Conditions: 150 mM KOAc, 10 mM MgCl2 and 150 mM bicine (pH 8.5), 24 C. An RNA of 177 nucleotides, treated with DMS and 2A3 and read out base by base. The DMS profile rests on 972 reads. It was measured as part of the RMDB library OK2TST. For DMS the reverse transcriptase was MarathonRT. Values cover nucleotides 27 to 126.

RNA sequence: GGGAACGACUCGAGUAGAGUCGAAAAGCAGAAGCCGACGAUCAGCGCCUGAUCGAUCAGGCCAUGAUUGCUCUCGACGGCACCGAGAACAAGUCUCGCCUCGGCGCAAACGCUAUCUUGGGUGUAACUCCCUGGAGUACUUCGGUACUCCAGGGAGAAAAGAAACAACAACAACAAC
Reactivity to DMS in 0.01 (KOAc 150mM, MgCl2 10mM, bicine 150mM(pH8.5), 24C), signal-to-noise 2, nucleotides 027 to 126: g010c020a080g010a190a210g000c010c000g000a090c030g010a010u000c010a040g010c280g000c100c050u000g040a050u000c130g000a150u000c010a000g050g020c000c140a070u030g000a090u010u000g010c010u020c090u020c040g020a050c070g000g000c040a040c030c000g040a000g000a070a030c120a090a060g000u000c110u010c100g030c120c010u000c020g030g010c040g000c120a050a110a160c110g040c050u000a000u000c030u000u010g000g020g020u000g000u000a050a210
Reactivity to 2A3 in 0.01 (KOAc 150mM, MgCl2 10mM, bicine 150mM(pH8.5), 24C), signal-to-noise 1, nucleotides 027 to 126: g080c050a000g090a110a030g070c000c000g020a020c040g000a010u000c020a000g010c010g070c120c050u020g020a060u060c130g030a090u110c010a030g000g010c040c020a040u110g000a070u030u100g000c000u010c000u000c000g100a090c060g000g100c010a050c060c040g000a010g080a070a040c130a230a000g120u080c020u030c070g020c010c010u110c030g010g010c000g000c050a090a090a020c050g000c010u010a010u050c000u040u060g030g020g060u070g020u030a050a060
For 2A3, 966 sequencing reads were counted.